The record gives the reactivity of an RNA of 177 nucleotides to 2A3. Reactivities are given for positions 27 through 126.
RNA sequence: GGGAACGACUCGAGUAGAGUCGAAAACAAAACAACAAACAAACGACGAAAAGCUCGCGAAACCGUCAACGUGGUGACGGAGACUGAACCACGUACAGUCCGCGAGCAAACGUCGACAAACAAACAAGCAGUCACAAUGGUUCGCCAUUGUGACUGCAAAAGAAACAACAACAACAAC
Reactivity to 2A3 in 0.01 (KOAc 150mM, MgCl2 10mM, bicine 150mM(pH8.5), 24C), signal-to-noise 2, nucleotides 027 to 126: c010a000a110a040a010c130a010a000c120a020a300a000c130a100a160a020c030g010a000c000g060a010a000a000a170g010c000u000c000g030c000g000a060a050a060c000c040g060u060c030a030a030c030g010u030g020g010u000g030a050c000g000g080a040g010a020c000u040g060a030a030c020c000a020c000g000u030a010c000a000g030u020c000c000g000c020g010a000g000c000a000a000a000c000g000u000c020g010a030c030a000a190a020c010a000a090a010c020a070a080

It was measured as part of the RMDB library OK1LIB.
Conditions: 150 mM KOAc, 10 mM MgCl2 and 150 mM bicine (pH 8.5), 24 C.